[RMDB]
RNA sequence: GGGAACGACUCGAGUAGAGUCGAAAAGGCGCGGGAAUGCGCGCCGGGGCCGGCCUGCUCACGGGCGAGCGCGGCAGCCGCCGCAUGGUGCUGAUCAGCGACGGGCAGACCUUCGACGCGCCGCUGGUAGGUAAUGUUGAUUCGUCAACAUUACCUAAAAAGAAACAACAACAACAAC
Reactivity to 2A3 in 0.01 (KOAc 150mM, MgCl2 10mM, bicine 150mM(pH8.5), 24C), signal-to-noise 3, nucleotides 027 to 126: g020g000c020g000c050g010g030g170a150a160u140g020c020g010c040g000c050c000g010g000g010g010c010c000g010g030c020c020u040g040c040u020c010a040c110g080g030g010c050g020a050g000c220g000c000g040g000c010a030g190c020c110g020c000c010g000c050a090u160g070g000u160g100c040u040g050a200u100c040a040g060c030g080a050c050g050g030g000c020a020g020a070c030c000u150u160c070g070a070c010g000c010g000c010c010g000c030u040g050g120
Reactivity to DMS in 0.01 (KOAc 150mM, MgCl2 10mM, bicine 150mM(pH8.5), 24C), signal-to-noise 6, nucleotides 027 to 126: g020g010c030g030c040g010g000g020a130a110u010g010c040g020c140g040c090c000g000g000g000g010c060c020g010g010c040c010u000g010c060u000c040a110c220g010g000g020c040g010a110g010c040g010c030g010g010c020a070g020c110c090g010c030c010g030c050a060u000g010g010u010g000c050u000g000a070u000c040a080g000c050g010a060c050g000g000g000c020a050g000a120c040c030u010u000c060g010a160c020g010c020g020c010c020g010c070u000g000g020